Chemical mapping of a 177-nucleotide RNA with DMS.
RNA sequence: GGGAACGACUCGAGUAGAGUCGAAAAGAUAUGGAACAUCUCUGGAUUGGCUAUGCAGCAUCGAUCGGACUGUCUCGGAAACGAGAUUCCGGGAGCUGGGUAGCCAAUCCAGAGAUGUUCCUAAGUCCAAUAUCCCUUCCUUCGGGAAGGGAUAUUGAAAAGAAACAACAACAACAAC
Reactivity to DMS in 0.01 (KOAc 150mM, MgCl2 10mM, bicine 150mM(pH8.5), 24C), signal-to-noise 2, nucleotides 027 to 126: g020a110u020a300u010g010g000a020a010c020a000u000c000u000c000u000g020g000a020u000u010g000g020c010u010a010u000g000c010a010g000c010a300u000c210g020a090u020c020g000g000a050c300u000g010u000c000u000c000g010g000a150a120a300c000g010a020g000a030u000u000c010c000g010g000g000a000g020c000u000g010g010g040u000a010g000c000c000a000a000u000c000c000a020g000a000g010a000u000g000u000u000c000c000u000a010a090g000u010c060
Values cover nucleotides 27 to 126.
It was measured as part of the RMDB library TTRINS.